[RMDB]
RNA sequence: GGGAACGACUCGAGUAGAGUCGAAAAAACUGGCGACGUCCUAAGCAAACAUCUCUUGCGUCAAAGUCGAAUCUUGGUGGAGUGUCUAGCUGAAUCUGAUUACUUACCUAAGAGUAUCGAGGAGUUAACAUGCUUAUACGAAAGGAACCUUUUUAGCUGACCCUACGUAAUUCGUUACGUAGGGUCAAAAAGAAACAACAACAACAAC
Reactivity to 2A3 in 0.01 (KOAc 150mM, MgCl2 10mM, bicine 150mM(pH8.5), 24C), signal-to-noise 2, nucleotides 027 to 156: a000a000c140u160g050g000c090g040a040c020g060u020c030c040u090a090a010g000c040a030a010a010c020a100u010c020u000c010u120u110g020c010g070u120c070a100a040a010g100u090c020g020a050a070u050c000u010u070g010g000u060g010g000a040g080u020g020u020c100u100a030g000c050u070g090a050a030u040c050u040g000a030u060u130a020c000u000u020a050c000c000u020a080a020g020a070g120u060a060u100c060g000a020g000g040a040g000u030u080a080a000c030a020u040g020c000u020u060a020u010a150c070g120a180a090a010g000g000a040a020c000c000u010u110u040u060u240a110g070c100
Reactivity to DMS in 0.01 (KOAc 150mM, MgCl2 10mM, bicine 150mM(pH8.5), 24C), signal-to-noise 2, nucleotides 027 to 156: a120a060c050u020g020g030c000g020a160c040g000u000c010c040u000a080a170g030c010a060a060a140c040a060u000c020u000c010u000u000g050c060g010u000c060a060a090a130g030u000c060g020a070a020u000c020u000u000g010g030u000g020g020a100g010u010g000u020c000u000a180g000c050u000g010a090a090u000c050u020g010a090u000u000a050c030u010u010a060c060c040u000a050a090g000a120g010u000a080u010c050g000a080g010g000a150g020u000u000a090a070c090a120u010g010c020u000u000a090u000a120c050g000a050a020a090g000g020a080a100c040c020u010u000u010u000u000a070g020c080
The record gives the reactivity of an RNA of 207 nucleotides to 2A3 and DMS.
Values cover nucleotides 27 to 156.
2A3 adducts were read by reverse transcription with SuperScript II with manganese.
It was measured as part of the RMDB library OK3TST.